RNA sequence: GGGAACGACUCGAGUAGAGUCGAAAAGAGCUAAUAUCUACUUCGUUUGUGCAUAUCACUAUAGGGAAGCUGAUGGGUUGCGAGCGUUCAAGCAAAUCGCAGUGCCUAGUGGAAUGAACGGCUCGAAGGGUAAUGAAAACUUCGGUUUUCAUUACCCAAAAGAAACAACAACAACAAC
Reactivity to DMS in 0.01 (KOAc 150mM, MgCl2 10mM, bicine 150mM(pH8.5), 24C), signal-to-noise 3, nucleotides 027 to 126: g000a070g010c050u000a110a100u010a060u010c040u000a080c000u000u000c090g000u000u000u020g000u020g000c060a100u010a090u010c030a050c030u000a110u020a120g000g000g010a030a040g000c070u000g040a060u030g010g010g020u000u000g010c050g020a110g010c060g020u020u000c050a080a100g010c020a050a030a080u000c060g010c030a030g010u010g010c040c020u000a040g020u030g000g010a030a090u010g000a050a050c080g020g010c010u000c030g000a110a120
Reactivity to 2A3 in 0.01 (KOAc 150mM, MgCl2 10mM, bicine 150mM(pH8.5), 24C), signal-to-noise 3, nucleotides 027 to 126: g070a000g020c030u110a040a060u100a160u200c080u040a060c010u040u070c090g230u030u040u200g070u030g010c060a030u030a040u160c060a020c040u080a050u080a160g030g000g090a150a030g010c040u030g030a080u110g080g020g000u050u020g020c020g010a010g000c060g030u080u110c070a030a030g020c020a000a020a040u030c010g000c000a010g010u040g050c010c000u030a020g060u010g020g050a000a020u040g020a050a030c000g060g000c000u000c020g000a120a120

Source: RMDB library OK1LIB, as collected in RNAgym. Structure probing data (DMS and 2A3) for a 177-nucleotide construct. For DMS, 5,705 sequencing reads were counted. Reactivities are given for positions 27 through 126.